RNA sequence: GGGAACGACUCGAGUAGAGUCGAAAAGAGCUUGCUCCCUCACUAAUAUACCAUACUAUAUUCCUACGCCUGGAUCAUAUAGGACCUCAUGGACCUGUUGGUUUCAGGCCAAACCAUAGGAAAGGACUUCACGAAUGUCUUUCGAGACAUUCGUGAAAAAAGAAACAACAACAACAAC
Reactivity to DMS in 0.01 (KOAc 150mM, MgCl2 10mM, bicine 150mM(pH8.5), 24C), signal-to-noise 2, nucleotides 027 to 126: g000a090g010c000u000u000g000c010u030c000c000c000u020c070a110c060u050a050a050u000a120u060a130c100c030a100u040a150c170u010a020u010a200u000u000c000c080u000a100c280g000c000c000u000g000g020a000u000c020a040u050a000u010a040g000g000a150c000c000u020c110a150u000g020g040a030c000c000u020g000u000u000g000g060u000u060u000c000a100g000g000c030c150a010a010a010c180c040a240u010a030g030g000a010a060a060g000g000a100c160
Reactivity to 2A3 in 0.01 (KOAc 150mM, MgCl2 10mM, bicine 150mM(pH8.5), 24C), signal-to-noise 5, nucleotides 027 to 126: g030a020g010c070u110u070g020c020u080c000c010c000u040c010a080c030u120a100a090u170a030u010a100c040c050a080u060a160c030u140a080u070a110u180u040c000c010u030a030c100g000c020c020u010g000g010a020u030c000a010u030a000u020a300g020g040a110c000c010u260c150a270u300g010g000a080c010c000u020g020u010u020g020g010u000u060u190c000a000g000g040c000c000a000a020a000c000c010a080u070a040g000g040a020a000a000g110g030a030c000
About this RNA
Chemical mapping of a 177-nucleotide RNA with DMS and 2A3. Source: RMDB library RFM100, as collected in RNAgym. The RNA was probed in 150 mM KOAc, 10 mM MgCl2 and 150 mM bicine (pH 8.5) at 24 C. For DMS, 1,793 sequencing reads were counted. Reactivities are given for positions 27 through 126.